[RMDB]
RNA sequence: GGGAACGACUCGAGUAGAGUCGAAAAGAUAUGGACCGAAUAGGGAGCGAGUCGGAAACGACAUCGCGAAGAACUAUCGGUCCUAAGUCAAAACUGUACAAGGGGUGUUCGCACCCCUUGUACAGAACCAAUCGGUUACGUUCGCGUAACCGAUUGGAAAAGAAACAACAACAACAAC
Reactivity to DMS in 0.01 (KOAc 150mM, MgCl2 10mM, bicine 150mM(pH8.5), 24C), signal-to-noise 1, nucleotides 027 to 126: g000a030u010a300u000g010g010a000c010c020g000a120a030u010a020g000g020g000a140g020c000g040a030g020u000c000g000g000a130a060a150c010g030a020c000a130u000c000g000c030g020a100a140g010a070a050c020u050a020u010c010g000g000u000c000c000u000a000a020g000u000c050a040a150a090a090c010u000g000u000a000c010a010a000g010g000g040g000u000g000u000u050c220g020c010a000c000c000c000c000u000u000g000u000a000c000a000g000a050a170